The record gives the reactivity of an RNA of 207 nucleotides to 2A3. High 2A3 reactivity points to a flexible backbone, as in loops and unpaired stretches.
RNA sequence: GGGAACGACUCGAGUAGAGUCGAAAACUACUUUCGAGUAGCAUUAAGCGUACUACAGCGUCACCCAACAGCUAUACUCAGUACUUAUCCCAAAUAGGAUAAGGAACUGUAUAGACAUGGCAAGUCGCUGUAUCGCACAGCCUCCCUUCGGGGAGAACGCUUAGCUGUUGUUCGCAACAGCUAAGCGAAAAGAAACAACAACAACAAC
Reactivity to 2A3 in 0.01 (KOAc 150mM, MgCl2 10mM, bicine 150mM(pH8.5), 24C), signal-to-noise 2, nucleotides 027 to 156: c000u010a010c010u110u120u170c280g090a000g020u070a010g020c040a100u270u250a260a000g010c010g040u010a060c060u000a000c060a010g000c000g080u110c050a200c060c010c000a030a070c030a060g070c000u010a000u000a000c010u010c040a000g020u000a000c000u000u000a000u040c000c010c020a100a160a300u300a090g000g000a000u000a000a000g000g000a000a000c000u020g000u030a000u000a000g050a090c050a090u020g010g040c090a210a100g000u000c000g000c010u000g000u000a050u300c030g000c010a010c010a050g150c030c000u020c000c000c000u010u060c070g050g000g020g040a000g050a050a050